Source information
The data come from the RNA Mapping Database (RMDB), library M2PK50. Chemical mapping of a 177-nucleotide RNA with 2A3. The reactions ran in a buffer of 150 mM KOAc, 10 mM MgCl2 and 150 mM bicine (pH 8.5), at 24 C. For 2A3, 930 sequencing reads were counted. Reactivities are given for positions 27 through 126.
RNA sequence: GGGAACGACUCGAGUAGAGUCGAAAACCUCUAGUAUUCGUACUAGAGGCACAUGCCGCCGCAACGGCUUCCUGACGGGGCGGAUUCACUUUAAAUGGAGCAAAGCCGCUGUGUUCGCACAGCGGAAGAGGUUAGACCGAUUCGUCGGUCUAACCUCAAAAGAAACAACAACAACAAC
Reactivity to 2A3 in 0.01 (KOAc 150mM, MgCl2 10mM, bicine 150mM(pH8.5), 24C), signal-to-noise 1, nucleotides 027 to 126: c020c020u010c000u000a000g000u030a020u030u120c200g000u020a010c000u000a000g000a000g050g010c050a030c010a130u140g040c000c000g050c000c030g110c070a000a050c060g030g000c020u100u100c010c010u020g010a020c020g000g030g030g060c000g000g040a020u140u110c090a110c070u150u180u210a070a100a090u220g080g030a040g000c000a120a060a000g070c000c010g000c000u010g010u000g020u020u030c060g050c100a010c000a000g010c000g000g000a000a000